[RMDB]
RNA sequence: GGGAACGACUCGAGUAGAGUCGAAAACUGUCAGAAUGGUUUGUGUUGGCCUGUGGAGGUGGAUCAUUAACUAGUCAAUUGCCGGCCUGCUCAAAAUUAACUGACUUCAGCAGAGUACCUGGCAGACGUAUUCUACAGAGUUCGCUCUGUAGAAUACAAAAGAAACAACAACAACAAC
Reactivity to 2A3 in 0.01 (KOAc 150mM, MgCl2 10mM, bicine 150mM(pH8.5), 24C), signal-to-noise 2, nucleotides 027 to 126: c010u010g030u040c030a040g030a140a180u140g060g040u060u040u080g060u020g020u030u120g070g010c030c030u070g000u050g070g030a090g000g050u070g000g030a050u030c010a020u050u140a100a040c040u040a040g030u010c000a040a250u040u090g010c000c000g000g030c000c020u000g000c010u030c020a090a140a040a130u140u120a070a060c070u040g140a010c000u060u100c060a010g010c000a000g060a010g100u060a110c020c020u100g010g000c000a010g000a020c030
Reactivity to DMS in 0.01 (KOAc 150mM, MgCl2 10mM, bicine 150mM(pH8.5), 24C), signal-to-noise 5, nucleotides 027 to 126: c050u000g010u000c040a060g000a110a090u010g000g010u000u020u000g020u000g020u000u000g010g000c050c020u000g020u000g000g010a070g010g030u000g000g010a110u010c070a070u010u000a060a080c100u010a100g020u000c050a090a130u010u000g010c030c020g010g000c080c010u000g010c020u010c080a050a020a050a110u000u010a070a140c090u000g010a050c090u000u000c180a030g000c020a020g000a110g010u010a090c110c000u010g030g010c030a050g020a060c130
An RNA of 177 nucleotides, treated with 2A3 and DMS and read out base by base. For 2A3, 1,456 sequencing reads were counted. 2A3 is a SHAPE reagent: it acylates the 2'-hydroxyl of flexible nucleotides of all four kinds. Source: RMDB library OK2TST, as collected in RNAgym. Conditions: 150 mM KOAc, 10 mM MgCl2 and 150 mM bicine (pH 8.5), 24 C.